This 177-nucleotide RNA was probed chemically with 2A3.
RNA sequence: GGGAACGACUCGAGUAGAGUCGAAAAGAUUUUAGGUCAUCAUAAAUUAAAAUUUGAUUUUCUUCACUCAGAGAAUAUUAGGAUAAUGGAGUUAUCUGUUCUCUGAAAUUUGCGGAAUCAAACAUGUGUCCGAUACAUGAUUCGUCAUGUAUCGGACAAAAGAAACAACAACAACAAC
Reactivity to 2A3 in 0.01 (KOAc 150mM, MgCl2 10mM, bicine 150mM(pH8.5), 24C), signal-to-noise 2, nucleotides 027 to 126: g040a020u090u150u230u190a160g070g060u050c010a130u050c000a040u300a220a090a140u230u130a050a040a080a050u000u000u010g030a020u000u120u160u150c000u140u120c010a030c010u000c000a000g020a000g000a000a000u030a130u200u300a020g080g040a000u000a010a040u130g190g000a090g210u030u000a000u000c010u020g000u000u000c000u000c000u000g020a050a020a020u120u090u080g060c010g040g010a000a000u020c010a000a010a000c120a070u100g100u030
It was measured as part of the RMDB library RFM100.